[RMDB]
RNA sequence: GGGAACGACUCGAGUAGAGUCGAAAAUAAAAUGGUAAGAACGGUUCCAAAGGAGCCGAAGGUCAUAGCUAUGGGAUCGAUCUAAAAUCUUAUCAAUUAGGUGACGAGCUUGGCACUGAUCAAAAAACUUUGUAUUUGAGUUCGCUCAAAUACAAAGAAAAGAAACAACAACAACAAC
Reactivity to DMS in 0.01 (KOAc 150mM, MgCl2 10mM, bicine 150mM(pH8.5), 24C), signal-to-noise 2, nucleotides 027 to 126: u010a110a040a080a120u020g010g020u000a050a030g000a080a260c020g020g000u000u000c010c030a100a200a220g020g010a020g020c000c020g030a090a010g030g020u000c020a110u010a170g000c040u020a080u000g000g000g000a010u000c070g000a060u000c030u000a040a050a080a090u000c040u000u000a030u010c040a070a060u010u000a050g010g010u010g010a060c010g010a090g010c070u020u000g030g020c050a060c070u000g010a080u000c060a000a040a040a100a060a110
Reactivity to 2A3 in 0.01 (KOAc 150mM, MgCl2 10mM, bicine 150mM(pH8.5), 24C), signal-to-noise 2, nucleotides 027 to 126: u170a000a040a040a040u090g020g000u030a030a000g000a060a030c000g010g000u010u010c030c000a230a130a160g020g000a010g000c020c010g030a000a010g020g000u060c030a040u080a080g010c020u060a120u170g030g040g040a030u070c050g000a010u000c020u090a040a080a040a060u040c010u060u040a040u100c000a000a150u100u070a040g050g000u010g020a040c030g020a010g060c080u050u060g020g000c000a010c050u030g040a080u090c040a010a060a080a050a030a060